[RMDB]
RNA sequence: GGGAACGACUCGAGUAGAGUCGAAAACCAUCGACUGUCACCAGAUGCUGCAUCACCUGAUCACUGAUGGCUCAACGGUAUCCGGCGGUACAACUGAAUACUUGUAGCUGCAUUUUGAGCGGGUUGGAAAAUCGGAGGUUGUUCGCAACCUCCGAAAGUUAGGUUUGUAGUUCGCUACAAACCUAACAAAAGAAACAACAACAACAAC
Reactivity to DMS in 0.01 (KOAc 150mM, MgCl2 10mM, bicine 150mM(pH8.5), 24C), signal-to-noise 1, nucleotides 027 to 156: c040c020a170u000c070g000a090c050u010g000u000c050a110c040c010a030g000a040u000g000c020u000g030c060a160u000c060a030c000c010u040g000a150u000c050a090c110u000g010a080u010g010g030c030u000c030a120a070c060g000g010u000a030u010c010c010g010g020c020g060g030u000a060c000a070a070c020u000g000a050a020u000a070c070u010u000g040u000a020g010c020u010g000c010a110u000u020u020u000g030a110g020c010g040g020g010u000u010g000g000a040a050a070a120u000c020g020g010a040g070g050u000u000g000u000u000c270g040c000a000a030c010c000u000c000c000g000a000a000a080
Reactivity to 2A3 in 0.01 (KOAc 150mM, MgCl2 10mM, bicine 150mM(pH8.5), 24C), signal-to-noise 5, nucleotides 027 to 156: c000c000a050u120c080g070a050c050u100g010u120c030a030c050c020a050g010a090u060g010c020u030g010c010a020u040c020a040c010c010u030g030a040u020c050a020c050u050g030a060u060g110g020c010u030c050a040a050c040g020g010u020a040u020c030c020g000g000c020g060g040u080a050c030a070a040c060u100g080a090a050u080a120c040u040u130g040u090a030g020c030u050g000c050a090u080u080u090u130g020a020g000c010g000g000g000u030u040g050g020a050a080a070a130u040c000g010g000a000g010g000u010u000g000u030u030c070g000c080a000a010c000c000u000c000c000g000a000a000a000